[RMDB]
RNA sequence: GGGAACGACUCGAGUAGAGUCGAAAAGAGACGCUGACGGAAACCCCGGGAACAAGGAAACAGGAGGAGGAUCGGUAGAAAAGAGCGAGACCUCCGAUUCGAGAGCUCCUGGACUCCUCGGCUCUGGAUGGGCAGAUGUUCGCAUCUGCCAAAAGAAACAACAACAACAAC
Reactivity to 2A3 in 0.01 (KOAc 150mM, MgCl2 10mM, bicine 150mM(pH8.5), 24C), signal-to-noise 5, nucleotides 027 to 129: g080a010g010a020c070g000c040u080g010a030c050g050g040a030a090a100c010c010c010c010g000g000g000a060a060c060a050a030g040g040a040a070a000c020a010g020g010a000g000g010a030g010g020a020u000c000g000g010u180a040g100a050a120a050a020g120a020g090c040g000a030g070a150c000c010u010c000c000g010a000u000u040c030g040a030g010a050g210c020u000c020c030u010g000g010a030c030u000c000c000u010c000g000g010c000u030c010u010g090g020a070u060g050
Reactivity to DMS in 0.01 (KOAc 150mM, MgCl2 10mM, bicine 150mM(pH8.5), 24C), signal-to-noise 3, nucleotides 027 to 129: g020a000g000a020c120g080c090u040g030a020c060g030g070a060a160a110c050c060c020c040g030g020g030a060a070c110a000a130g020g010a060a100a160c110a060g000g010a030g030g000a070g020g000a120u000c040g050g000u000a020g020a050a060a060a060g030a070g010c140g020a090g040a170c130c040u000c020c050g020a040u010u050c020g020a080g040a100g050c030u000c050c030u030g000g040a190c090u010c020c050u010c120g030g030c000u000c040u000g040g000a040u040g010